[RMDB]
RNA sequence: GGGAACGACUCGAGUAGAGUCGAAAAUUCUUUUAAAGAAGCAUUAGCUAUUUGGGGCGAUCAAGUUGCUGCUGUUUUAGUAGAGCCAAUUGUUGGGAAUUUUGGAAUGGUUGCACCAGAAGAUGGAUCCUAGCGUAGGAUUCGUCCUACGCUAGGAAAAAGAAACAACAACAACAAC
Reactivity to DMS in 0.01 (KOAc 150mM, MgCl2 10mM, bicine 150mM(pH8.5), 24C), signal-to-noise 1, nucleotides 027 to 126: u000u000c010u050u000u010u030a010a120a070g010a100a060g000c050a090u010u030a120g010c030u000a120u000u010u010g010g000g000g020c030g020a020u000c060a050a170g010u000u010g000c010u000g000c020u000g030u000u000u000u000a030g040u000a030g010a080g030c020c020a020a050u000u000g000u010u030g010g030g030a150a170u000u000u000u020g000g000a060a080u000g020g010u010u000g020c040a040c010c010a050g010a030a070g010a050u000g010g000a200